Annotation: The record gives the reactivity of an RNA of 177 nucleotides to DMS and 2A3. For DMS, 1,811 sequencing reads were counted. For DMS the reverse transcriptase was MarathonRT. It was measured as part of the RMDB library OK1LIB. The RNA was probed in 150 mM KOAc, 10 mM MgCl2 and 150 mM bicine (pH 8.5) at 24 C. Reactivities are rounded to 0.1 and cut off at 0 and 3. The 2A3 profile rests on 558 reads.
RNA sequence: GGGAACGACUCGAGUAGAGUCGAAAAAGGGACGAGGAAAUGCUGGAGGUUAUGCGAAAAUGUGAGCUGGCGCUAGCGGGGGCAAGUUAUAAUCACACAUUUGUGAGCCGCAUGCCUGGAAUUUUGGACGCACAAUCAACUUCGGUUGAUUGUGCGUAAAAGAAACAACAACAACAAC
Reactivity to DMS in 0.01 (KOAc 150mM, MgCl2 10mM, bicine 150mM(pH8.5), 24C), signal-to-noise 1, nucleotides 027 to 126: a000g030g000g020a030c090g020a040g000g000a110a120a050u090g000c050u000g010g000a080g010g000u000u050a030u070g010c070g000a050a070a020a040u000g040u000g040a100g030c050u040g030g030c070g000c050u010a040g000c030g090g000g000g000g000c020a020a010g010u000u000a060u020a020a050u000c130a050c120a060c250a180u010u000u000g010u000g000a050g000c000c050g010c050a100u060g000c000c010u000g000g010a020a140u000u040u000u000g010g000
Reactivity to 2A3 in 0.01 (KOAc 150mM, MgCl2 10mM, bicine 150mM(pH8.5), 24C), signal-to-noise 1, nucleotides 027 to 126: a000g010g020g050a010c040g030a020g000g040a090a040a130u150g000c030u120g150g000a050g010g010u230u110a010u090g080c010g000a080a020a000a070u040g040u090g040a000g000c000u000g000g090c020g000c040u030a050g070c040g000g050g000g000g000c000a020a020g000u000u070a170u070a100a040u090c050a000c000a050c000a030u090u050u110g040u030g050a030g000c010c000g010c070a010u080g000c000c000u020g070g020a220a150u070u040u020u050g070g050